An RNA of 177 nucleotides, treated with 2A3 and DMS and read out base by base. The reactions ran in a buffer of 150 mM KOAc, 10 mM MgCl2 and 150 mM bicine (pH 8.5), at 24 C. Values cover nucleotides 27 to 126. For DMS the reverse transcriptase was MarathonRT.
RNA sequence: GGGAACGACUCGAGUAGAGUCGAAAACAGUAAACGUGGCAACAGUGGUGAUUAACAGCCUGAUAGGGUGCUGCAGAGGCCCACUGUUUUGCUACUAAAGGUCUCUGCAGACGAUGAAAGACAUCGACCCUAUAAUAUGAUUCGUCAUAUUAUAGGGAAAAGAAACAACAACAACAAC
Reactivity to 2A3 in 0.01 (KOAc 150mM, MgCl2 10mM, bicine 150mM(pH8.5), 24C), signal-to-noise 9, nucleotides 027 to 126: c040a010g050u200a030a110a070c100g090u090g040g010c020a030a010c010a040g010u030g040g040u120g080a170u120u160a100a040c020a040g040c010c000u060g050a070u190a150g090g010g030u110g030c000u000g000c000a000g000a010g010g010c000c020c000a020c020u010g020u010u070u060u090g010c020u030a010c000u020a010a020a010g010g010u000c000u000c000u000g000c000a000g000a020c010g000a000u020g040a060a090a050g060a010c000a010u000c010g020a110
Reactivity to DMS in 0.01 (KOAc 150mM, MgCl2 10mM, bicine 150mM(pH8.5), 24C), signal-to-noise 9, nucleotides 027 to 126: c050a130g010u040a050a080a100c170g010u020g010g000c030a040a030c040a030g010u010g000g030u040g010a130u040u040a100a100c140a100g010c020c000u010g010a120u060a110g010g010g010u010g000c010u000g000c010a010g000a010g000g010c010c000c040a090c100u000g010u000u010u010u030g020c070u010a060c050u020a040a120a080g010g000u000c000u000c000u000g010c000a010g000a140c020g000a020u000g000a070a140a090g010a220c010a010u010c010g000a300